[RMDB]
RNA sequence: GGGAACGACUCGAGUAGAGUCGAAAAAGUAACGUUAUACGAUGUCGCAGAGUAUGCCGGUGUCUCUUAUCAGACCGUUUCCCGCGUGGUGAACCAGGCCAGCCACGUUUCUGCGAAAACGCGGGAACUCGUUAGUGUUAUUCGUAACACUAACGAGAAAAGAAACAACAACAACAAC
Reactivity to DMS in 0.01 (KOAc 150mM, MgCl2 10mM, bicine 150mM(pH8.5), 24C), signal-to-noise 6, nucleotides 027 to 126: a070g010u010a070a080c090g020u010u000a080u010a060c090g020a090u000g010u000c040g020c020a040g000a110g010u000a040u010g010c060c030g010g000u000g010u000c020u000c040u000u000a110u010c110a060g010a080c050c050g000u000u000u000c010c000c010g020c010g010u000g010g010u000g010a080a110c070c050a080g020g020c030c070a230g000c020c020a050c060g000u000u000u010c010u010g000c040g000a050a050a070a050c060g020c070g000g000g000a050a100
Reactivity to 2A3 in 0.01 (KOAc 150mM, MgCl2 10mM, bicine 150mM(pH8.5), 24C), signal-to-noise 5, nucleotides 027 to 126: a000g130u090a080a030c070g020u080u080a100u040a100c090g030a080u090g070u120c020g000c080a000g020a020g090u080a060u130g040c030c020g050g020u060g050u020c020u000c000u070u100a100u170c020a010g060a070c010c020g020u020u040u020c000c000c000g010c010g000u020g010g040u060g030a040a060c020c020a050g080g000c020c010a010g010c010c000a020c010g000u020u060u010c010u010g000c010g030a100a070a040a010c040g000c000g020g030g020a020a020
Structure probing data (DMS and 2A3) for a 177-nucleotide construct. For DMS, 8,447 sequencing reads were counted. Conditions: 150 mM KOAc, 10 mM MgCl2 and 150 mM bicine (pH 8.5), 24 C. The data come from the RNA Mapping Database (RMDB), library OK2TRN.